[RMDB]
RNA sequence: GGGAACGACUCGAGUAGAGUCGAAAAGAUAUGGAGCCAUCAACAGCCACACCAGUCGGAAACGACUGUUGUGGACAUGAUGACUCCUAAGUCAAAAUCGGCUACUAUCUUCGGAUAGUAGCCGAAAGUAAAGAGACAUGUUCGCAUGUCUCUUUACAAAAGAAACAACAACAACAAC
Reactivity to DMS in 0.01 (KOAc 150mM, MgCl2 10mM, bicine 150mM(pH8.5), 24C), signal-to-noise 4, nucleotides 027 to 126: g010a040u000a300u010g020g000a000g000c010c000a010u000c000a030a100c300a210g000c010c000a000c000a020c030c010a020g010u010c000g010g000a060a070a180c000g010a010c000u000g010u000u000g010u000g000g010a030c080a110u000g000a020u000g010a010c000u010c000c010u000a010a060g000u010c030a090a070a120a140u010c000g000g010c000u000a010c000u000a000u000c000u000u020c210g010g000a020u000a000g020u000a000g000c000c000g000a000a000a050
Reactivity to 2A3 in 0.01 (KOAc 150mM, MgCl2 10mM, bicine 150mM(pH8.5), 24C), signal-to-noise 3, nucleotides 027 to 126: g010a020u030a030u140g010g010a010g040c030c000a000u010c010a000a110c050a190g120c020c000a020c000a010c020c000a010g020u010c000g000g050a090a040a030c010g010a000c000u000g010u010u000g000u000g000g030a010c010a040u030g000a000u010g000a010c000u000c000c000u010a070a010g050u050c020a010a010a010a300u040c000g000g000c010u010a000c000u000a000u000c010u030u070c240g040g000a000u010a000g000u000a000g000c010c010g000a000a000a000